RNA sequence: GGGAACGACUCGAGUAGAGUCGAAAAUCUUACUCUUUUCUGUAAAGAGGAGACUGCUGGACUCGCCGCCCGAGUUCGAGACUGAGCCAUCUCCGAGAGAAGAUUCCGCAGGGGACGGGAUCAGCUCCCGAGAGGGGAUCAGUGGUAAAGAGCAUUGCACGUCUCAUAACUUCGGUUAUGAGACGUGAAAAGAAACAACAACAACAAC
Reactivity to 2A3 in 0.01 (KOAc 150mM, MgCl2 10mM, bicine 150mM(pH8.5), 24C), signal-to-noise 3, nucleotides 027 to 156: u020c010u050u110a300c010u040c020u040u090u030u110c130u240g260u300a060a000a010g010a010g010g000a000g010a010c050u060g030c080u140g060g000a000c000u010c000g070c080c070g030c030c040c010g010a010g000u000u050c010g030a040g020a030c010u010g020a010g040c010c010a180u060c040u010c010c020g040a030g000a010g010a080a000g000a000u000u030c000c020g000c130a130g040g060g020g020a020c000g000g000g000a000u010c010a010g010c010u030c000c000c030g200a270g010a000g110g050g020g000a040u020c000a000g020u050g010g020u130a090a120a020g070a050g040c150a100u070u230g020